[RMDB]
RNA sequence: GGGAACGACUCGAGUAGAGUCGAAAAUACUUAAAACCAGAUUUGAUCAGGUAUGGAAUUGGUUUUCAGCUGCUGAACUUGGAAAAACUGUUACCGAGUACUGGUCGGCAUGGUAUGAACAUGCCGAAAGGCAGAUACGAUUCGUCGUAUCUGCCUUAAAAGAAACAACAACAACAAC
Reactivity to DMS in 0.01 (KOAc 150mM, MgCl2 10mM, bicine 150mM(pH8.5), 24C), signal-to-noise 3, nucleotides 027 to 126: u070a050c110u010u030a000a040a090a090c020c010a040g000a190u000u010u040g000a060u030c070a050g000g020u030a070u020g010g000a060a090u000u020g000g010u000u010u000u000c090a030g000c100u010g010c050u000g000a050a060c060u020u010g000g000a080a060a120a050a060c150u000g020u000u000a100c030c030g000a040g000u010a090c040u010g000g010u010c010g010g040c010a030u010g000g000u020a120u040g030a100a100c020a000u000g020c010c000g010a020
Reactivity to 2A3 in 0.01 (KOAc 150mM, MgCl2 10mM, bicine 150mM(pH8.5), 24C), signal-to-noise 2, nucleotides 027 to 126: u040a000c020u010u020a050a040a010a040c020c000a030g080a280u120u100u150g140a180u080c060a050g080g060u250a080u120g080g000a080a020u090u080g010g030u030u000u030u000c000a020g020c000u150g030c000u030g050a020a050c010u020u070g040g040a060a080a000a040a000c010u150g030u090u010a060c000c030g010a030g000u020a040c060u100g020g020u000c000g000g000c010a030u020g020g000u030a070u070g000a000a000c000a020u020g000c000c000g000a000
Structure probing data (DMS and 2A3) for a 177-nucleotide construct. For 2A3 the reverse transcriptase was SuperScript II with manganese. The DMS profile rests on 6,091 reads.